[RMDB]
The data come from the RNA Mapping Database (RMDB), library OK2TST. The record gives the reactivity of an RNA of 177 nucleotides to 2A3 and DMS. DMS adducts were read by reverse transcription with MarathonRT. The RNA was probed in 150 mM KOAc, 10 mM MgCl2 and 150 mM bicine (pH 8.5) at 24 C. 2A3 adducts were read by reverse transcription with SuperScript II with manganese. The 2A3 profile rests on 3,299 reads.

RNA sequence: GGGAACGACUCGAGUAGAGUCGAAAAGAGGUGCUGGUCGCUCUUGGCCAGCUGGCAGCGGCGGUGGUAGUGGCCGUCGGUGUCGCGGUGGUGUCCCUGCUCGCCAUUGCGCGGGUGGAGUGGCCCGCCGUAGGGAGGGUUUCGACCCUCCCUACGGAAAAGAAACAACAACAACAAC
Reactivity to 2A3 in 0.01 (KOAc 150mM, MgCl2 10mM, bicine 150mM(pH8.5), 24C), signal-to-noise 3, nucleotides 027 to 126: g110a020g080g080u110g040c020u010g010g000u040c020g010c140u040c080u200u120g010g000c000c000a000g020c010u000g000g000c010a080g100c000g000g000c020g010g040u100g060g160u170a150g120u120g210g010c030c020g000u010c000g000g160u000g010u030c050g000c050g100g030u050g020g040u130g010u060c000c000c000u010g000c010u000c010g000c000c030a300u170u300g040c160g000c000g030g010g000u020g000g030a070g010u180g020g000c000c020c000g020
Reactivity to DMS in 0.01 (KOAc 150mM, MgCl2 10mM, bicine 150mM(pH8.5), 24C), signal-to-noise 3, nucleotides 027 to 126: g000a110g020g010u010g010c010u000g010g010u000c010g020c200u010c170u010u010g000g000c000c000a010g020c000u010g010g010c020a020g010c000g000g000c000g000g010u000g010g030u010a100g010u020g010g010c000c000g020u000c010g000g000u000g020u000c030g010c090g010g020u000g000g010u010g020u000c010c010c010u000g000c000u010c010g000c010c000a260u010u000g010c180g020c000g000g010g010u000g010g000a080g010u000g010g010c010c000c010g000